[RMDB]
RNA sequence: GGGAACGACUCGAGUAGAGUCGAAAAGAUAUGGACGAAAGAGCUGAUGACCCAUGCUAAUCUCGGAAACGAGACAACAUGGCAAGGCUCGAUCGUCCUAAGUCAAAGUCUACCUUCGGGUAGACAACAUAUUCUCUGUCUUCGGACAGAGAAUAUGAAAAGAAACAACAACAACAAC
Reactivity to DMS in 0.01 (KOAc 150mM, MgCl2 10mM, bicine 150mM(pH8.5), 24C), signal-to-noise 6, nucleotides 027 to 126: g000a030u000a300u000g000g000a010c010g010a000a070a300g000a010g000c000u010g000a080u020g020a140c300c000c000a000u000g000c030u000a150a300u000c010u000c000g010g000a100a070a160c000g010a000g000a030c120a070a100c000a000u000g000g000c020a070a050g000g000c010u000c000g000a140u000c000g020u000c000c000u000a000a070g000u000c020a070a070a130g000u000c000u000a010c010c000u000u020c220g010g000g010u000a000g000a000c000a040a110
Reactivity to 2A3 in 0.01 (KOAc 150mM, MgCl2 10mM, bicine 150mM(pH8.5), 24C), signal-to-noise 5, nucleotides 027 to 126: g020a030u050a020u100g000g000a000c010g010a010a020a020g010a010g010c010u030g020a300u120g020a170c010c000c000a010u000g000c010u180a300a170u050c010u000c000g010g000a060a050a020c010g000a000g010a020c020a050a030c000a010u010g010g000c040a120a270g000g000c000u000c000g010a000u000c000g000u000c000c000u000a030a010g000u000c020a090a080a000g000u000c000u000a010c000c000u010u080c300g110g000g000u000a000g000a010c000a010a000
An RNA of 177 nucleotides, treated with DMS and 2A3 and read out base by base. The data come from the RNA Mapping Database (RMDB), library TTRDEL. The DMS profile rests on 6,773 reads. The 2A3 profile rests on 17,175 reads. Conditions: 150 mM KOAc, 10 mM MgCl2 and 150 mM bicine (pH 8.5), 24 C.